[RMDB]
RNA sequence: GGGAACGACUCGAGUAGAGUCGAAAACGUUUCUGUUGAUCAAGAACGAAAGUUAGGGGAUCGAAGAUGAUUAGAUACCGUUGUAGUCCUAACCAUAAACUUUACUAUCCAAGAGUUGGAUUAGUUAACGUAACCAACAUUUCGAUGUUGGUUACGUAAAAGAAACAACAACAACAAC
Reactivity to DMS in 0.01 (KOAc 150mM, MgCl2 10mM, bicine 150mM(pH8.5), 24C), signal-to-noise 5, nucleotides 027 to 126: c080g000u000u010u010c010u020g020u010u030g010a090u020c050a060a070g010a040a030c070g010a100a130a120g010u000u020a050g000g000g010g000a060u000c020g010a070a140g000a060u030g000a100u020u010a070g000a070u010a060c100c040g000u000u000g010u000a080g010u000c030c000u000a020a050c070c130a080u010a080a050a120c110u010u000u000a020c020u000a050u000c000c020a030a120g000a200g020u020u010g000g000a040u020u020a020g010u010u020a060
Reactivity to 2A3 in 0.01 (KOAc 150mM, MgCl2 10mM, bicine 150mM(pH8.5), 24C), signal-to-noise 3, nucleotides 027 to 126: c050g020u020u030u070c050u030g080u050u100g030a170u070c020a000a060g070a150a030c050g090a130a090a010g060u040u030a020g000g050g020g050a060u080c040g020a040a030g050a050u180g010a020u020u120a040g060a130u070a110c100c050g020u050u170g040u070a000g040u000c010c000u020a020a000c020c020a040u110a080a070a040c000u040u070u080a020c000u020a000u000c010c000a060a010g170a120g280u100u050g010g000a010u000u070a030g020u000u120a020
This 177-nucleotide RNA was probed chemically with DMS and 2A3. 2A3 adducts were read by reverse transcription with SuperScript II with manganese. The data come from the RNA Mapping Database (RMDB), libraries RFM100 and RFMREP. The reactions ran in a buffer of 150 mM KOAc, 10 mM MgCl2 and 150 mM bicine (pH 8.5), at 24 C. For DMS the reverse transcriptase was MarathonRT.